RNA sequence: GGGAACGACUCGAGUAGAGUCGAAAAUGGCAUGUGGCACCUACUUUAUUACAGGGGCAGAGUUGGCACACCUGUGUUUGAUAGAGCCUUGCCCAGAAUCAUUAGCUUUGAUGCCACCAGAUUUAUACGUAGCCUAUGCUUUCGAGCAUAGGCUACGAAAAGAAACAACAACAACAAC
Reactivity to DMS in 0.01 (KOAc 150mM, MgCl2 10mM, bicine 150mM(pH8.5), 24C), signal-to-noise 1, nucleotides 027 to 126: u010g000g000c040a060u000g050u000g000g020c000a090c140c010u010a050c030u000u000u000a040u010u000a020c010a030g000g000g010g000c020a040g020a230g010u020u000g020g030c000a080c040a070c090c040u010g010u000g010u010u000u000g020a070u000a040g000a100g000c050c030u010u000g000c000c010c000a170g000a060a040u020c140a030u020u000a110g010c140u010u000u000g030a120u010g000c000c000a020c020c200a090g010a110u000u000u000a090u020a210
Reactivity to 2A3 in 0.01 (KOAc 150mM, MgCl2 10mM, bicine 150mM(pH8.5), 24C), signal-to-noise 1, nucleotides 027 to 126: u060g000g020c010a000u060g000u070g050g000c000a000c010c000u020a040c000u080u210u170a190u120u090a060c020a080g000g000g000g000c010a020g010a040g280u220u230g070g040c030a020c010a150c130c000u000g000u010g010u050u140u070g050a100u010a080g110a030g010c030c000u030u120g020c010c010c010a010g020a020a160u080c030a070u070u120a020g040c070u160u050u080g000a060u060g010c000c030a000c010c000a050g010a110u050u200u030a170u060a090